Source: RMDB library OK3TST, as collected in RNAgym. The record gives the reactivity of an RNA of 207 nucleotides to 2A3 and DMS. The DMS profile rests on 3,071 reads. Values cover nucleotides 27 to 156. The RNA was probed in 150 mM KOAc, 10 mM MgCl2 and 150 mM bicine (pH 8.5) at 24 C. 2A3 is a SHAPE reagent: it acylates the 2'-hydroxyl of flexible nucleotides of all four kinds.

RNA sequence: GGGAACGACUCGAGUAGAGUCGAAAAAAGAACACGAUGCCCUUUGGUGUCGCUUUUGGGCAUCCAAACAGUCCGCGGAUGUUGAGUGCAUGUCCAUGGUGAAAGCGCAGCUCAGGAUCACAGCCCAAGAGCCUAACGGCUGGUUCGUAGCGCCUCACACAGGGUACAAGUUCGCUUGUACCCUGUGAAAAGAAACAACAACAACAAC
Reactivity to 2A3 in 0.01 (KOAc 150mM, MgCl2 10mM, bicine 150mM(pH8.5), 24C), signal-to-noise 2, nucleotides 027 to 156: a000a010g110a040a050c060a020c080g030a030u030g000c000c000c000u060u040u080g090g020u060g050u110c090g030c060u100u050u060u020g000g000g000c000a030u070c000c030a080a040a040c010a010g100u040c020c020g000c090g080g020a040u030g070u180u030g070a100g060u130g020c100a030u070g000u050c040c020a050u070g010g020u090g070a150a090a030g050c080g020c010a030g030c040u050c050a020g050g000a050u080c020a040c010a150g000c020c040c000a120a040g110a020g090c000c010u070a100a020c010g010g030c020u000g010g000u010u010c000g000u020a030g030c000g040c040c010u010c000a010
Reactivity to DMS in 0.01 (KOAc 150mM, MgCl2 10mM, bicine 150mM(pH8.5), 24C), signal-to-noise 2, nucleotides 027 to 156: a130a090g000a040a060c040a140c090g000a080u000g000c020c000c060u010u000u010g030g040u010g030u020c070g030c040u000u000u010u010g010g020g030c080a050u000c030c000a050a070a090c040a080g010u000c040c010g030c090g020g040a100u000g000u010u000g020a140g050u010g060c070a080u000g040u010c020c050a080u010g000g010u000g010a040a010a050g020c040g040c010a240g020c050u020c040a060g000g000a040u000c070a150c070a110g010c010c020c040a060a160g000a040g010c040c040u010a070a110c070g000g030c030u010g010g000u000u020c010g000u000a100g000c020g000c130c020u000c030a230